[RMDB]
RNA sequence: GGGAACGACUCGAGUAGAGUCGAAAAGUGGCUCGGCGUUCGGGCGCGGAUCGCAUCCGGCGACCAGCAUCGCGGGGACGUGCGGCGGCCACAGCUGGGCGAGUGGACGCAGCGGAUUGAGCCGAACCAGCGUGCAAGCAUUCGUGCUUGCACGCUGAAAAGAAACAACAACAACAAC
Reactivity to DMS in 0.01 (KOAc 150mM, MgCl2 10mM, bicine 150mM(pH8.5), 24C), signal-to-noise 1, nucleotides 027 to 126: g000u040g000g000c050u000c000g000g010c060g070u000u000c000g000g010g000c060g070c060g000g000a060u000c120g010c010a300u000c010c060g070g020c020g000a010c000c200a100g000c230a170u000c090g000c110g010g040g070g000a010c090g010u000g000c030g020g000c010g030g000c000c000a020c070a030g000c070u000g000g030g010c020g000a140g040u000g000g000a010c000g000c030a130g000c030g010g040a190u000u010g010a010g000c010c020g040a130a110c050
Reactivity to 2A3 in 0.01 (KOAc 150mM, MgCl2 10mM, bicine 150mM(pH8.5), 24C), signal-to-noise 2, nucleotides 027 to 126: g140u040g020g010c000u000c040g000g050c050g010u110u220c140g020g120g000c150g010c030g080g070a180u030c060g000c020a030u090c030c130g020g000c010g030a060c000c000a010g010c050a050u070c040g070c030g040g020g000g060a070c080g000u120g080c000g020g000c000g030g000c000c000a030c000a030g020c000u080g000g080g090c000g050a020g030u110g000g000a000c010g000c050a030g040c040g080g000a080u050u170g030a080g010c020c030g000a030a010c070